Overview: Chemical mapping of a 207-nucleotide RNA with DMS and 2A3. For DMS, 3,082 sequencing reads were counted. Source: RMDB library OK3TST, as collected in RNAgym. For 2A3, 1,384 sequencing reads were counted.
[RMDB]
RNA sequence: GGGAACGACUCGAGUAGAGUCGAAAAAUUGCCGUUGAUGAGAUUACGGAUGGCCGGGAUACCCCCUAUAUGGCUCAGCUAUUGGUGGAGCGCUAUAAGGACAAGGGUCACGCGGUCGAGGUAUUCCCUGACGCAUCGGGCGGCAAUAAGUCAAGCAAGAAGAUACGUUAUUCGUAACGUAUCUUCUAAAAGAAACAACAACAACAAC
Reactivity to DMS in 0.01 (KOAc 150mM, MgCl2 10mM, bicine 150mM(pH8.5), 24C), signal-to-noise 2, nucleotides 027 to 156: a060u000u000g000c010c010g060u000u000g000a160u000g000a060g010a180u000u000a010c040g020g010a210u000g010g010c010c000g000g020g010a270u000a080c000c010c020c000c020u010a040u000a040u000g000g000c070u000c020a130g040c050u000a140u000u000g040g070u000g010g030a040g040c030g000c140u010a020u010a080a100g010g000a170c070a130a170g000g010g030u000c040a180c000g010c040g040g000u000c010g020a110g020g020u000a070u010u000c030c000c010u020g030a140c050g000c040a090u000c060g030g000g020c000g020g010c020a050a010u000a050a080g020u000c040a110a130g010c090a140
Reactivity to 2A3 in 0.01 (KOAc 150mM, MgCl2 10mM, bicine 150mM(pH8.5), 24C), signal-to-noise 3, nucleotides 027 to 156: a010u000u020g000c000c000g000u020u060g010a080u030g040a060g040a100u010u200a030c070g000g020a040u080g030g000c000c010g020g020g010a040u200a210c010c010c000c000c000u030a070u000a000u170g020g000c000u000c030a010g020c020u080a060u300u150g140g020u100g110g010a020g020c080g000c060u020a020u000a070a140g010g000a000c110a060a070g000g020g000u010c020a000c010g230c000g000g010u040c060g020a060g070g050u130a080u080u110c000c000c000u060g010a030c020g000c030a000u000c010g020g040g000c000g000g010c000a010a010u050a050a000g060u060c070a080a010g020c050a070